[RMDB]
RNA sequence: GGGAACGACUCGAGUAGAGUCGAAAAGAUAUGGAUUAUUACAGCUUGGACCGUACGGAUUCGGAAACGAAUUUACGCUAGCUGAAUAAUCCUAAGUCAAAUCUUAGCGGGUUCGCCCGCUAAGAAAGACUAAUCAUGAGUUCGCUCAUGAUUAGUCAAAAGAAACAACAACAACAAC
Reactivity to DMS in 0.01 (KOAc 150mM, MgCl2 10mM, bicine 150mM(pH8.5), 24C), signal-to-noise 5, nucleotides 027 to 126: g000a020u000a070u020g000g000a020u000u000a000u000u000a150c000a010g020c010u000u010g010g000a020c300c000g010u000a030c300g010g000a030u000u000c010g000g010a020a010a020c000g010a010a000u000u010u000a010c010g010c020u000a000g010c000u000g000a040a000u000a000a010u000c000c000u000a000a100g000u000c000a120a120a140u000c000u000u000a000g000c000g010g000g020u000u020c300g020c010c000c010g000c010u000a000a000g000a010a070a110
Reactivity to 2A3 in 0.01 (KOAc 150mM, MgCl2 10mM, bicine 150mM(pH8.5), 24C), signal-to-noise 3, nucleotides 027 to 126: g010a010u020a020u080g000g010a000u000u010a000u030u080a300c010a010g010c010u300u300g090g040a060c000c040g000u020a030c140g170g090a050u000u020c000g000g000a020a010a010c010g000a010a010u080u070u010a000c010g000c060u030a010g000c000u010g000a000a000u000a000a000u030c000c000u000a030a010g000u010c020a060a050a300u010c010u000u000a000g000c000g030g000g030u060u040c140g130c050c000c000g000c000u010a000a000g000a000a000a010